[RMDB]
RNA sequence: GGGAACGACUCGAGUAGAGUCGAAAAGAAGAGAAAGGAGACACAAGGACAGUCUCCAGAGGUUCCUAAGGCCUCGAUCGCGCCUGCCGGGAAUCAUGGACUCCCGGUUGUCCAUGAAAGAAGAAGACACCGUGAUAGGGUUCGCCCUAUCACGGUGAAAAGAAACAACAACAACAAC
Reactivity to 2A3 in 0.01 (KOAc 150mM, MgCl2 10mM, bicine 150mM(pH8.5), 24C), signal-to-noise 1, nucleotides 027 to 126: g120a000a010g130a000g100a000a090a070g010g000a030g000a000c060a000c070a170a270g060g070a030c030a030g000u000c000u000c000c000a000g000a020g010g000u030u170c000c030u070a070a040g040g000c000c000u020c030g020a140u070c030g000c010g010c040c010u000g000c010c000g000g000g000a010a060u020c010a040u070g010g060a020c020u000c060c000c000g000g000u070u070g000u000c000c030a030u090g030a080a090a030g180a090a000g040a050a020g040a040
Reactivity to DMS in 0.01 (KOAc 150mM, MgCl2 10mM, bicine 150mM(pH8.5), 24C), signal-to-noise 2, nucleotides 027 to 126: g000a130a130g010a090g010a140a210a080g000g000a040g000a030c040a130c150a140a070g040g010a150c110a280g020u000c000u050c000c000a080g000a090g000g000u000u010c060c190u000a040a060g010g050c060c000u000c040g000a090u010c050g000c190g060c020c020u020g000c010c040g000g020g050a140a080u040c000a130u000g030g000a010c040u000c040c030c010g020g000u000u000g050u000c010c000a140u080g000a030a160a080g000a110a050g000a160a040g000a140